[RMDB]
RNA sequence: GGGAACGACUCGAGUAGAGUCGAAAAUCCGUCGUUCCAUCCUUUUCUUACCUUGUGGCCGGCAUGGCCCCAGCCUCCUCGCUGGCGCCGGCUGGGCAACGAUCCGAGGGAACUAUUCCUCUCGAGAGAUAAAAAGAGAGUUCGCUCUCUUUUUAUCAAAAGAAACAACAACAACAAC
Reactivity to 2A3 in 0.01 (KOAc 150mM, MgCl2 10mM, bicine 150mM(pH8.5), 24C), signal-to-noise 2, nucleotides 027 to 126: u030c020c020g020u000c000g030u000u060c010c030a060u060c050c040u060u100u090u050c040u100u130a150c060c010u040u110g030u090g120g030c030c000g000g050c100a230u170g030g000c000c000c000c000a000g000c000c010u110c020c010u090c110g000c000u010g000g020c010g000c000c000g040g000c000u030g000g050g030c040a060a060c010g040a020u000c030c000g010a000g020g020g010a020a000c030u120a190u300u020c010c020u090c000u000c040g150a170g000a010
Reactivity to DMS in 0.01 (KOAc 150mM, MgCl2 10mM, bicine 150mM(pH8.5), 24C), signal-to-noise 3, nucleotides 027 to 126: u010c030c040g000u000c010g000u000u000c010c000a110u020c080c030u010u000u000u010c030u020u010a130c120c090u010u000g020u000g020g020c010c000g030g000c020a080u010g020g030c010c180c010c010a010g000c030c120u010c180c110u010c190g020c000u010g000g010c300g000c010c000g010g020c000u000g010g040g010c010a040a020c070g010a080u020c060c020g020a020g000g000g010a030a090c230u020a150u010u010c020c000u000c010u000c010g000a120g000a110
Description: Conditions: 150 mM KOAc, 10 mM MgCl2 and 150 mM bicine (pH 8.5), 24 C. An RNA of 177 nucleotides, treated with 2A3 and DMS and read out base by base. 2A3 adducts were read by reverse transcription with SuperScript II with manganese. In probing experiments dimethyl sulfate is read out at A N1 and C N3, which are open when not base-paired. Values cover nucleotides 27 to 126. For 2A3, 1,419 sequencing reads were counted.